[RMDB]
Structure probing data (2A3) for a 207-nucleotide construct. Conditions: 150 mM KOAc, 10 mM MgCl2 and 150 mM bicine (pH 8.5), 24 C. Reactivities are given for positions 27 through 156. High 2A3 reactivity points to a flexible backbone, as in loops and unpaired stretches.
RNA sequence: GGGAACGACUCGAGUAGAGUCGAAAAGGGGUCGCAAAGGGAGAUCGUCGUACGAGGCUUGGAUUUAUAGGCUGAAGCCUCCACGGCCUAUUGUCAGCCUUUGAAACGAUCGAAGAACUUUGCGACGGAGGCACCCAAACCUAUGUUCGCAUAGGAAGUAUCCUACGUGGUUCGCCACGUAGGAUACAAAAGAAACAACAACAACAAC
Reactivity to 2A3 in 0.01 (KOAc 150mM, MgCl2 10mM, bicine 150mM(pH8.5), 24C), signal-to-noise 2, nucleotides 027 to 156: g010g040g030g010u010c030g000c010a010a010a010g000g000g020a040g020a000u000c000g000u020c050g120u080a090c060g010a030g000g000c020u140u260g150g000a030u230u230u030a010u030a030g000g030c000u010g060a080a010g000c000c000u000c000c010a010c000g010g000c000c000u000a000u000u020g080u050c070a000g000c000c000u050u020u160g060a100a070a000c000g000a000u080c050g030a100a000g010a000a010c000u000u000u000g000c010g000a000c010g010g000a010g000g030c000a020c000c000c000a010a070a090c000c000u000a000u020g020u030u130c240g010c120a000u020a000g070g000a040a010